Chemical mapping of a 177-nucleotide RNA with 2A3 and DMS. For 2A3 the reverse transcriptase was SuperScript II with manganese. The DMS profile rests on 514 reads. Values are in units of 0.01, from 0 to 300, in steps of 10. It was measured as part of the RMDB library OK2TST. The RNA was probed in 150 mM KOAc, 10 mM MgCl2 and 150 mM bicine (pH 8.5) at 24 C. DMS adducts were read by reverse transcription with MarathonRT.
RNA sequence: GGGAACGACUCGAGUAGAGUCGAAAACUAUCGGCCAGGUCACGGCCGACCAGGAAACGCUGAAUGGCGCUGUCGCCAACUGAGUUUCAACAGCUGCUCGCUGGCCUGGCAGCUGACCUCGGCAACAAGUCACACAACCGUUCGCGGUUGUGUGACUAAAAGAAACAACAACAACAAC
Reactivity to 2A3 in 0.01 (KOAc 150mM, MgCl2 10mM, bicine 150mM(pH8.5), 24C), signal-to-noise 1, nucleotides 027 to 126: c030u050a100u190c080g160g010c010c010a050g030g030u000c020a000c020g000g070c000c000g000a020c020c000a020g000g070a040a040a000c040g000c000u000g100a300a090u030g040g000c030g070c100u240g300u300c040g010c000c000a030a000c010u080g000a030g190u070u160u070c080a110a130c030a060g010c010u070g030c030u080c020g130c050u010g030g020c010c000u000g010g010c010a050g000c010u030g010a040c010c000u100c090g010g000c000a030a010c040a000
Reactivity to DMS in 0.01 (KOAc 150mM, MgCl2 10mM, bicine 150mM(pH8.5), 24C), signal-to-noise 1, nucleotides 027 to 126: c070u000a070u000c140g040g000c000c000a050g000g000u040c010a110c110g030g050c030c000g010a000c110c020a050g040g030a050a040a300c080g030c000u000g000a080a080u040g000g000c010g050c300u000g000u050c010g000c000c000a060a180c090u000g000a010g060u000u000u000c020a160a150c000a070g010c020u010g030c150u020c040g020c150u000g000g000c080c010u020g100g000c010a000g030c200u050g000a070c080c010u000c220g010g000c000a140a030c150a040